RNA sequence: GGGAACGACUCGAGUAGAGUCGAAAACGUCAUGGACACCCAUCAAUGGAGGGCGGAUUAUUAUUGGGUACGCGAUACUGUCCUCUACAAGCAGUCCAUCAAUUUGCCGAGCCCUCUCAUCCACUAAGCUAUUAUGCUUUUGGAUACAUGCCUCGAAAUACGGAAGAGGUUUCGACCUCUUCCGUAUAAAAGAAACAACAACAACAAC
Reactivity to 2A3 in 0.01 (KOAc 150mM, MgCl2 10mM, bicine 150mM(pH8.5), 24C), signal-to-noise 1, nucleotides 027 to 156: c060g060u070c050a070u120g030g020a010c020a040c020c040c000a010u050c060a040a050u100g030g000a000g000g010g000c000g000g020a010u000u140a010u060u020a020u080u180g080g020g050u080a020c080g000c030g110a020u020a080c020u030g000u020c010c000u010c000u070a070c020a030a010g020c020a020g000u020c020c020a020u050c000a030a080u020u050u160g030c040c010g050a020g020c000c000c000u060c020u010c020a010u000c000c000a000c010u060a010a000g000c020u040a140u300u040a070u300g000c000u030u030u010u030g010g000a000u010a070c000a000u130g030c010c070u150c160g020a010a020
Reactivity to DMS in 0.01 (KOAc 150mM, MgCl2 10mM, bicine 150mM(pH8.5), 24C), signal-to-noise 1, nucleotides 027 to 156: c020g010u000c060a090u000g050g000a100c050a130c060c030c050a090u000c100a130a130u000g000g010a050g020g040g020c000g040g000a200u000u000a070u010u000a110u000u000g000g000g010u040a080c120g000c040g020a100u000a050c010u020g000u000c020c020u000c040u000a040c100a080a110g050c060a150g000u000c020c000a020u000c060a040a120u000u000u000g040c040c030g010a130g010c010c000c060u000c050u000c110a100u000c000c000a000c130u000a020a030g080c010u000a210u010u020a140u020g080c010u010u000u010u030g000g010a070u000a050c140a030u000g000c000c000u010c010g000a050a050

Annotation:
Chemical mapping of a 207-nucleotide RNA with 2A3 and DMS. The 2A3 profile rests on 753 reads. Conditions: 150 mM KOAc, 10 mM MgCl2 and 150 mM bicine (pH 8.5), 24 C.